[RMDB]
RNA sequence: GGGAACGACUCGAGUAGAGUCGAAAAGCAGGUGAGGGUGGUGGGCCCAUCUAGGGGCCAAGGGUGUCUGCCUGGAUGCUGGCAUGUGGGCUGCUCUAAGUAGCCUAAGGUACCGUCCAGCGCCCACCCCGGGUCAUAUUUUCGAAUAUGACCCGGGAAAAGAAACAACAACAACAAC
Reactivity to 2A3 in 0.01 (KOAc 150mM, MgCl2 10mM, bicine 150mM(pH8.5), 24C), signal-to-noise 1, nucleotides 027 to 126: g070c060a050g020g140u240g080a120g020g040g060u140g000g040u110g000g040g010c000c000c000a050u120c120u180a080g130g000g000g000c060c000a040a020g080g000g020u040g000u080c090u090g020c100c030u050g000g040a010u190g000c110u050g050g000c080a040u100g010u110g140g000g010c000u010g010c000u000c020u100a250a050g010u020a000g040c000c000u040a080a050g130g000u030a070c000c050g060u080c010c010a020g010c000g030c060c040c000a020c000
Reactivity to DMS in 0.01 (KOAc 150mM, MgCl2 10mM, bicine 150mM(pH8.5), 24C), signal-to-noise 1, nucleotides 027 to 126: g060c060a040g020g020u010g010a080g010g020g010u050g030g010u030g000g010g000c000c050c010a070u000c120u000a160g020g000g000g000c010c000a030a050g000g000g010u010g090u040c070u010g000c120c030u020g000g040a060u000g000c070u000g010g000c050a110u050g020u000g010g000g010c000u000g000c000u040c160u020a020a030g020u030a020g000c000c030u000a000a020g000g000u020a070c240c080g030u000c000c000a040g000c040g000c070c040c010a040c090